RNA sequence: GGGAACGACUCGAGUAGAGUCGAAAAAUGCAAUAGCCUCGUGCCAUCAGGCCUAUGGUCCUGUAUCAGCUAGUAUGAUCAACGAUCUUGAUGGACGUCCAUACUUGAAGUUGACAGCAUAGUUACGCCACCUAGCACAUUUCGAUGUGCUAGGUGGAAAAGAAACAACAACAACAAC
Reactivity to DMS in 0.01 (KOAc 150mM, MgCl2 10mM, bicine 150mM(pH8.5), 24C), signal-to-noise 2, nucleotides 027 to 126: a040u070g010c090a030a070u030a120g000c010c000u040c170g000u090g000c030c050a080u050c130a030g030g000c000c000u000a080u030g000g000u060c100c000u000g000u010a060u000c020a090g000c070u000a030g040u030a060u020g010a020u050c070a040a070c030g010a090u000c000u000u000g060a250u050g000g000a090c080g010u040c130c000a020u000a000c030u030u050g000a080a130g030u000u000g000a000c080a000g000c190a000u020a030g000u000u030a000c130g000
Reactivity to 2A3 in 0.01 (KOAc 150mM, MgCl2 10mM, bicine 150mM(pH8.5), 24C), signal-to-noise 5, nucleotides 027 to 126: a000u210g010c060a070a090u060a080g020c020c000u040c080g010u060g080c010c030a140u130c060a100g020g040c000c000u110a130u120g030g020u170c000c010u040g020u120a140u060c010a020g010c020u030a020g030u050a040u090g060a070u050c030a000a060c020g120a190u040c020u070u210g150a210u300g030g040a060c060g050u040c020c000a020u030a180c000u010u060g060a080a000g020u070u040g000a020c020a020g010c030a060u020a050g060u080u030a050c050g020
This 177-nucleotide RNA was probed chemically with DMS and 2A3. Values are in units of 0.01, from 0 to 300, in steps of 10. Reactivities are given for positions 27 through 126. Conditions: 150 mM KOAc, 10 mM MgCl2 and 150 mM bicine (pH 8.5), 24 C. The data come from the RNA Mapping Database (RMDB), library OK1LIB.